Background:
Structure probing data (2A3 and DMS) for a 207-nucleotide construct. 2A3 adducts were read by reverse transcription with SuperScript II with manganese.

[RMDB]
RNA sequence: GGGAACGACUCGAGUAGAGUCGAAAAAGUUCGCGCUUCCGUGAAACGCGAAAAUCGGAUGGUGGCUGCAAGUCGCAUCGCAAAACCGCGGCAAGUGGAGUUAGCGAGAGGAGGCUGGGUUUUGGCUAGAACACACGGUACUUCGGUACCGUGUGAACUGUGUUAUCGGAUUCGUCCGAUAACACAGAAAAGAAACAACAACAACAAC
Reactivity to 2A3 in 0.01 (KOAc 150mM, MgCl2 10mM, bicine 150mM(pH8.5), 24C), signal-to-noise 2, nucleotides 027 to 156: a000g090u030u020c010g010c020g000c060u150u060c020c060g120u090g120a110a040a040c000g000c010g060a050a020a000a050u120c080g070g000a020u010g040g050u060g010g030c030u080g070c100a080a030g030u030c020g000c030a040u060c040g000c140a030a020a020a060c070c040g030c010g030g000c060a090a040g030u090g080g060a090g040u080u130a030g020c020g010a010g000a040g060g000a060g010g030c020u040g020g040g000u000u100u100u000g050g000c000u050a030g040a130a000c000a000c000a000c000g020g010u010a000c000u010u030c130g110g000u010a010c040c020g000u000g000u000g000a000a010
Reactivity to DMS in 0.01 (KOAc 150mM, MgCl2 10mM, bicine 150mM(pH8.5), 24C), signal-to-noise 1, nucleotides 027 to 156: a100g040u000u000c010g040c000g050c000u000u010c050c250g030u000g020a130a000a010c010g040c010g000a050a040a080a090u030c080g010g000a150u010g030g030u000g000g020c060u000g020c040a050a180g000u010c010g080c000a220u000c030g000c060a080a070a100a120c090c110g010c020g000g000c050a120a230g030u000g000g000a060g010u000u000a140g020c020g050a070g010a170g000g000a060g010g020c040u000g000g010g000u000u000u000u010g040g000c060u000a120g010a070a150c000a010c000a010c000g010g020u000a000c000u000u010c300g080g060u000a000c000c000g030u000g000u000g010a010a050
Background: The DMS profile rests on 1,950 reads.